RNA sequence: GGGAACGACUCGAGUAGAGUCGAAAAAUGGGCUGCCGUCAGCUGUGUCGGAUCGAAUGCUUCGCCAGAGGCCGUCAGGUUACUGCCGGGUUCGGCAUCAUAGAUUGCCGCCAGUCCCGCCUGGCUAGCCAAAGGUUUUAUUCGUAAAACCUUUGGCAAAAGAAACAACAACAACAAC
Reactivity to DMS in 0.01 (KOAc 150mM, MgCl2 10mM, bicine 150mM(pH8.5), 24C), signal-to-noise 3, nucleotides 027 to 126: a090u010g010g000g020c020u010g000c100c030g010u000c030a060g010c080u010g000u000g030u000c010g010g020a040u010c050g010a140a120u020g010c080u000u000c060g010c100c150a090g010a100g000g010c030c040g000u000c050a020g000g020u000u010a100c120u000g010c040c010g010g000g000u000u000c010g000g000c010a010u010c090a130u010a120g000a090u000u010g010c020c030g000c120c080a110g000u000c020c010c040g010c130c000u000g010g010c050u020a180
Reactivity to 2A3 in 0.01 (KOAc 150mM, MgCl2 10mM, bicine 150mM(pH8.5), 24C), signal-to-noise 2, nucleotides 027 to 126: a010u060g020g010g050c020u030g000c020c010g040u050c000a030g010c040u070g010u030g040u140c010g020g010a040u030c040g080a240a070u190g010c000u070u040c010g040c080c060a060g000a050g040g000c020c020g040u010c010a000g080g050u110u110a120c020u060g010c000c010g010g020g000u040u040c020g000g000c000a020u060c020a000u050a150g170a230u000u060g000c000c010g030c000c030a030g010u040c000c020c000g040c010c010u040g020g050c060u080a030